[RMDB]
RNA sequence: GGGAACGACUCGAGUAGAGUCGAAAAAUUAACGGCCAGAAGGUGAGAUUCAGCAGCGGUCAGGACGGCGUCACCUUCUCUGACGUGCAGGAGUCUGCUGGCGGAGUUUACACUGCCACUAUGCGCGGUAAUCCCUCCAGUUCGCUGGAGGGAUUACAAAAGAAACAACAACAACAAC
Reactivity to 2A3 in 0.01 (KOAc 150mM, MgCl2 10mM, bicine 150mM(pH8.5), 24C), signal-to-noise 3, nucleotides 027 to 126: a000u250u190a080a080c050g010g000c020c000a040g000a060a010g030g040u110g010a030g010a140u060u110c020a010g000c010a030g300c030g100g040u110c010a020g060g050a030c060g000g030c020g030u010c020a080c000c000u130u060c040u030c010u050g030a010c000g030u050g050c010a030g000g120a040g010u060c000u030g050c050u000g020g000c010g030g010a010g010u030u050u030a080c140a020c050u070g000c000c010a030c060u150a070u130g020c050g000c000g040
Reactivity to DMS in 0.01 (KOAc 150mM, MgCl2 10mM, bicine 150mM(pH8.5), 24C), signal-to-noise 2, nucleotides 027 to 126: a040u030u020a040a090c050g000g000c020c060a080g030a090a060g020g000u030g000a080g000a040u000u000c030a090g000c040a090g010c060g010g000u010c060a080g030g000a090c030g000g040c090g050u010c040a130c040c000u020u000c040u010c030u000g000a100c030g030u030g000c020a080g010g000a070g000u000c060u000g010c020u000g000g010c030g020g010a160g000u000u020u050a080c170a030c030u010g000c010c050a070c110u000a040u030g010c020g050c080g000
The record gives the reactivity of an RNA of 177 nucleotides to 2A3 and DMS. The RNA was probed in 150 mM KOAc, 10 mM MgCl2 and 150 mM bicine (pH 8.5) at 24 C. The 2A3 profile rests on 1,989 reads. 2A3 adducts were read by reverse transcription with SuperScript II with manganese.